This 177-nucleotide RNA was probed chemically with 2A3 and DMS. For DMS the reverse transcriptase was MarathonRT. Source: RMDB library RFMREP, as collected in RNAgym. Conditions: 150 mM KOAc, 10 mM MgCl2 and 150 mM bicine (pH 8.5), 24 C.
RNA sequence: GGGAACGACUCGAGUAGAGUCGAAAAUGUAGUAACAUAGCUAUUCCCCUUUCGGCGAGACUUGGCGUGUUUCUGUCGUUCUUAGUAUAGCAUAUUUAUAAUGCGCUUACAUUUUCUUGCCAUGAAGCUAGUAGCAUUCGUUCGCGAAUGCUACUAGAAAAGAAACAACAACAACAAC
Reactivity to 2A3 in 0.01 (KOAc 150mM, MgCl2 10mM, bicine 150mM(pH8.5), 24C), signal-to-noise 2, nucleotides 027 to 126: u190g010u030a000g020u020a090a090c090a200u110a080g050c020u060a040u050u070c030c020c000c020u010u080u170c050g000g030c000g010a010g010a050c020u040u040g020g000c020g010u040g000u030u030u030c080u050g050u020c010g020u030u000c010u010u030a050g060u080a060u050a100g080c050a050u010a080u160u160u030a180u130a130a000u010g000c010g020c000u020u030a030c020a110u020u040u030u080c030u020u010g020c030c020a060u090g040a040a010g010
Reactivity to DMS in 0.01 (KOAc 150mM, MgCl2 10mM, bicine 150mM(pH8.5), 24C), signal-to-noise 2, nucleotides 027 to 126: u020g010u020a060g030u010a120a090c170a090u000a120g020c050u000a120u000u000c030c010c020c150u000u000u000c210g000g000c010g000a040g000a100c280u010u000g000g000c040g010u000g000u000u000u000c160u000g000u000c010g000u010u000c020u000u000a150g030u000a020u000a050g000c020a300u000a040u030u000u000a110u000a090a020u000g000c020g010c060u000u000a140c100a090u000u000u010u010c040u000u000g020c050c050a090u000g000a040a110g000